[RMDB]
RNA sequence: GGGAACGACUCGAGUAGAGUCGAAAAGAUAUGGAGUUUAUGAAGAACGAAGAACAAGUCGGAAACGACUUGGGAGUUCCAUACUGACUCCUAAGUCAAAAGCAACGAAACUUCGGUUUCGUUGCAACUAGCUUAUAAGCUUCGGCUUAUAAGCUAGAAAAGAAACAACAACAACAAC
Reactivity to DMS in 0.01 (KOAc 150mM, MgCl2 10mM, bicine 150mM(pH8.5), 24C), signal-to-noise 3, nucleotides 027 to 126: g000a050u000a300u000g010g000a020g020u000u000u010a030u000g010a210a260g000a020a020c020g030a100a200g000a150a210c010a000a000g010u010c010g010g000a150a100a210c000g020a010c010u000u000g000g000g000a120g000u000u000c010c020a050u010a140c300u000g000a000c010u000c010c010u010a040a200g000u010c010a070a070a110a200g010c000a000a010c000g010a000a000a020c030u010u010c300g030g020u010u000u000c000g020u000u000g020c000a020a050
Reactivity to 2A3 in 0.01 (KOAc 150mM, MgCl2 10mM, bicine 150mM(pH8.5), 24C), signal-to-noise 3, nucleotides 027 to 126: g040a010u090a060u190g010g010a000g010u070u160u130a100u070g050a100a220g010a090a010c090g180a300a070g050a050a030c000a000a000g010u020c000g000g000a110a090a070c000g000a000c000u000u000g000g000g010a030g020u030u040c000c010a010u050a160c170u080g070a010c000u000c000c010u010a180a030g010u000c020a010a000a110a140g000c010a000a010c010g000a010a000a000c030u090u130c300g100g000u030u000u000c000g000u000u000g000c000a000a010